[RMDB]
RNA sequence: GGGAACGACUCGAGUAGAGUCGAAAACUGUGGGAUAGCAGCAACGGGAGGGCUAGAGGAUCAACUAAGAAGCAAACAGCGAGAAGACAGACAACCCAAACCUGCAGCGCCGCUUGUAGAUUACCACAGAGAUGACAAAAAAAUUUACGGAGAGGGAACAAGAUGUUGAGUUCGCUCAACAUCUUGUAAAAGAAACAACAACAACAAC
Reactivity to 2A3 in 0.01 (KOAc 150mM, MgCl2 10mM, bicine 150mM(pH8.5), 24C), signal-to-noise 1, nucleotides 027 to 156: c010u000g010u040g010g020g020a040u060a100g000c030a010g000c010a060a040c090g080g020g010a060g020g020g000c010u010a000g030a010g070g020a060u060c010a020a020c000u090a140a050g080a110a020g020c030a030a000a180c030a040g010c010g050a030g020a080a010g110a080c060a010g040a000c010a020a090c000c000c000a060a090a090c010c000u010g010c030a070g050c030g090c050c030g000c050u030u000g030u000a030g010a090u100u060a030c040c020a010c020a040g020a000g000a020u070g020a020c010a030a070a000a000a000a000a130u120u100u020a020c040g000g000a030g030a010g040g030g000a080